[RMDB]
RNA sequence: GGGAACGACUCGAGUAGAGUCGAAAACUGAGUCCUGCCCAGUGCGGGUACCUGAAACCAGGGUACAACCGGGCGAAGGGCCCGUAAACGGCGGGGGUAACUAUGACCCUCUUAAGGUAGCGUAAUAAUCGACACAACACUUCGGUGUUGUGUCGAUAAAAGAAACAACAACAACAAC
Reactivity to DMS in 0.01 (KOAc 150mM, MgCl2 10mM, bicine 150mM(pH8.5), 24C), signal-to-noise 2, nucleotides 027 to 126: c030u000g000a140g000u020c020c110u000g000c070c000c060a260g000u030g030c000g000g000g040u000a030c000c000u000g000a300a230a240c020c000a030g020g000g040u000a300c300a110a100c000c000g000g000g000c000g060a300a050g000g000g000c000c040c000g110u000a000a100a070c290g000g030c160g040g000g000g000g040u000a040a170c140u000a060u000g000a090c000c000c070u050c060u000u000a000a160g050g000u000a020g000c110g030u000a010a210u000a130
Reactivity to 2A3 in 0.01 (KOAc 150mM, MgCl2 10mM, bicine 150mM(pH8.5), 24C), signal-to-noise 1, nucleotides 027 to 126: c010u000g000a030g100u070c000c000u000g010c000c000c000a100g000u000g000c000g000g000g000u210a300c000c010u000g000a030a000a000c040c050a050g130g000g000u090a060c050a130a040c000c000g020g000g010c020g000a020a020g000g000g000c000c030c000g000u000a080a080a080c040g000g000c000g030g000g000g000g030u010a000a010c010u070a040u300g080a130c000c070c000u010c000u030u070a120a000g000g010u050a090g010c000g120u000a000a090u080a090